[RMDB]
RNA sequence: GGGAACGACUCGAGUAGAGUCGAAAAUGGCGACGUCACUGGUGCCCGCGUUGCGGGCGUCCAGCCGCAGCGACACCACAUACGGCCGGUCCGGUUGCGGGGGCCGUUGGGUGGGGUUGGGUGCCUCCUGUUGGAAAGACUUCGGUCUUUCCAACAGAAAAGAAACAACAACAACAAC
Reactivity to 2A3 in 0.01 (KOAc 150mM, MgCl2 10mM, bicine 150mM(pH8.5), 24C), signal-to-noise 2, nucleotides 027 to 126: u120g040g050c100g030a220c070g060u090c040a040c100u040g000g000u000g010c000c020c010g010c120g070u070u300g000c000g000g000g040c000g010u050c030c000a000g000c000c030g010c020a010g010c030g020a000c000a010c010c000a090c020a020u170a020c010g020g000c030c020g080g120u070c010c000g140g000u300u200g080c060g050g050g000g010g000c020c000g010u020u020g030g020g010u130g020g020g010g000u110u040g020g000g050u060g010c020c000u030c000
Reactivity to DMS in 0.01 (KOAc 150mM, MgCl2 10mM, bicine 150mM(pH8.5), 24C), signal-to-noise 2, nucleotides 027 to 126: u040g000g020c010g020a080c080g000u020c200a120c040u030g010g010u030g030c030c010c020g000c010g020u030u020g000c000g030g000g000c010g000u010c020c040a040g000c100c040g010c180a130g010c050g010a100c050a080c010c010a090c070a110u020a030c040g000g000c010c000g010g010u020c050c010g030g040u050u090g020c020g000g020g000g000g010c030c040g000u020u000g000g000g010u020g000g000g000g000u020u040g020g000g000u010g000c020c020u000c070
The record gives the reactivity of an RNA of 177 nucleotides to 2A3 and DMS. Reactivities are rounded to 0.1 and cut off at 0 and 3. The RNA was probed in 150 mM KOAc, 10 mM MgCl2 and 150 mM bicine (pH 8.5) at 24 C. DMS adducts were read by reverse transcription with MarathonRT. Source: RMDB library OK1LIB, as collected in RNAgym.